[RMDB]
Structure probing data (DMS) for a 177-nucleotide construct. DMS (dimethyl sulfate) methylates the pairing face of unpaired adenines and cytosines.

RNA sequence: GGGAACGACUCGAGUAGAGUCGAAAAGAUAUGGAUCGGAUAGACAUGCGUGAUCGGAAACGAUACGCAACAGCUAUCUCGAUCCUAAGUCAAAACAGGACCUCUGGGUUCGCCCAGAGGUCCUGAAUCAGAUACGUCUCUUCGGAGACGUAUCUGAAAAAGAAACAACAACAACAAC
Reactivity to DMS in 0.01 (KOAc 150mM, MgCl2 10mM, bicine 150mM(pH8.5), 24C), signal-to-noise 1, nucleotides 027 to 126: g010a090u000a240u000g010g000a000u000c000g000g000a020u000a000g000a080c060a300u010g000c000g050u040g000a040u000c000g000g000a060a020a160c000g000a020u000a000c020g000c000a040a050c300a160g000c000u000a020u000c000u020c000g030a020u000c000c000u000a000a090g020u000c020a070a100a120a210c010a050g020g010a000c010c000u000c000u020g020g000g030u020u000c300g020c080c030c030a010g000a000g020g000u000c000c000u000g010a000a070